[RMDB]
RNA sequence: GGGAACGACUCGAGUAGAGUCGAAAACCCCAGCCUCCUCGCUGGCGCCGGCUGGGCAACGAUCCGAGGGAACUAUUCCUCUCGAGAAUCGGCAAAUGGGGCCCCUCGCUCGUAUCUCCGAGAGGAGCAAAGAGACUAUUCGUAGUCUCUAAAAGAAACAACAACAACAAC
Reactivity to DMS in 0.01 (KOAc 150mM, MgCl2 10mM, bicine 150mM(pH8.5), 24C), signal-to-noise 9, nucleotides 027 to 129: c070c020c010c070a110g030c040c030u030c050c030u030c090g000c040u040g020g010c060g040c070c040g000g000c060u020g010g000g010c070a070a040c040g020a060u000c030c010g030a060g000g000g000a050a140c180u060a180u060u030c020c000u020c000u020c020g020a130g000a090a120u030c020g010g000c100a010a070a070u040g030g020g000g040c040c000c010c020u010c050g010c030u040c070g010u040a090u050c020u050c060c040g010a090g000a090g000g050a020g030c210a070a100
Reactivity to 2A3 in 0.01 (KOAc 150mM, MgCl2 10mM, bicine 150mM(pH8.5), 24C), signal-to-noise 9, nucleotides 027 to 129: c010c000c000c000a000g020c010c020u060c010c000u050c050g040c050u060g030g000c030g040c030c020g030g040c030u100g010g010g000c020a060a050c030g030a040u000c020c010g000a020g010g010g020a030a040c050u090a190u150u080c030c010u070c000u010c010g130a150g020a120a070u020c000g010g000c040a030a080a160u180g010g000g020g000c000c000c000c000u030c020g030c010u080c030g080u150a160u060c040u000c030c020g020a020g000a020g050g020a010g010c030a020a140
This 170-nucleotide RNA was probed chemically with DMS and 2A3. In probing experiments dimethyl sulfate is read out at A N1 and C N3, which are open when not base-paired. The RNA was probed in 150 mM KOAc, 10 mM MgCl2 and 150 mM bicine (pH 8.5) at 24 C. 2A3 adducts were read by reverse transcription with SuperScript II with manganese.